[RMDB]
An RNA of 177 nucleotides, treated with 2A3 and DMS and read out base by base.
Values cover nucleotides 27 to 126.
DMS adducts were read by reverse transcription with MarathonRT.
The RNA was probed in 150 mM KOAc, 10 mM MgCl2 and 150 mM bicine (pH 8.5) at 24 C.
2A3 adducts were read by reverse transcription with SuperScript II with manganese.
Source: RMDB library M2PK90, as collected in RNAgym.
RNA sequence: GGGAACGACUCGAGUAGAGUCGAAAAAAAAAGGCACUUCAGGUGGCUCUGGGGCGAAAGUACUGACGACAGACCAGAAGCGGGAAGCCGUUGAGUUUAUGUGUGAUGCGACCGCUCUGUCGAAAAAGUAAAUAGGAGUAUUCGUACUCCUAUUUACAAAAGAAACAACAACAACAAC
Reactivity to 2A3 in 0.01 (KOAc 150mM, MgCl2 10mM, bicine 150mM(pH8.5), 24C), signal-to-noise 3, nucleotides 027 to 126: a000a000a030a050a060g040g020c030a010c000u060u050c050a040g020g050u030g060g000c010u020c030u070g000g000g000g000c030g030a030a020a010g030u070a050c040u050g050a020c040g010a020c010a010g020a020c000c090a060g040a140a010g020c010g020g000g010a060a010g030c060c030g020u030u070g080a100g060u090u200u100a130u100g180u020g050u060g050a070u080g020c010g020a030c010c000g000c030u010c010u040g010u000c000g020a060a050a020a020a020
Reactivity to DMS in 0.01 (KOAc 150mM, MgCl2 10mM, bicine 150mM(pH8.5), 24C), signal-to-noise 6, nucleotides 027 to 126: a020a040a040a090a030g000g010c020a020c060u000u000c060a060g010g000u000g010g000c060u000c040u000g010g010g010g010c130g000a050a030a070g020u000a090c070u010g000a140c040g010a040c050a030g000a130c140c090a120g010a090a050g020c030g010g000g000a100a120g010c040c030g010u000u000g000a090g020u000u010u010a050u010g010u000g010u010g010a080u000g010c030g010a180c030c010g000c030u000c020u000g000u000c010g010a030a050a050a070a080